This 207-nucleotide RNA was probed chemically with 2A3. Values cover nucleotides 27 to 156. For 2A3, 692 sequencing reads were counted. The RNA was probed in 150 mM KOAc, 10 mM MgCl2 and 150 mM bicine (pH 8.5) at 24 C.
[RMDB]
RNA sequence: GGGAACGACUCGAGUAGAGUCGAAAAAAUCGGGGAAGAUAAGCUAGCAGCAAAAAGGAACCGAUUCCCACCAAGUUCGGAACGAGAUACCGGGCGAGGCGCUGAAGAAAGAAUCUCGCUUCAGACAUACAGCCGUGUCGCUUCGGCGACACGGCAACUUGUUAGAUCAGUUCGCUGAUCUAACAAGAAAAGAAACAACAACAACAAC
Reactivity to 2A3 in 0.01 (KOAc 150mM, MgCl2 10mM, bicine 150mM(pH8.5), 24C), signal-to-noise 1, nucleotides 027 to 156: a050a000u040c040g020g010g020g040a000a090g010a170u050a130a020g060c010u060a050g060c120a030g000c020a010a000a060a180a000g070g010a050a000c010c000g000a000u000u000c000c000c000a000c000c000a010a000g010u020u000c000g030g020a090a070c060g020a110g040a250u100a130c000c010g020g010g030c020g000a020g050g000c080g080c040u020g010a020a020g000a130a150a080g040a080a160u040c130u060c130g020c000u010u020c000a040g020a090c020a080u230a020c070a050g000c030c010g000u030g000u000c000g020c060u120u120c300g100g030c050g010a000c000a000c000g010g000c000a020a010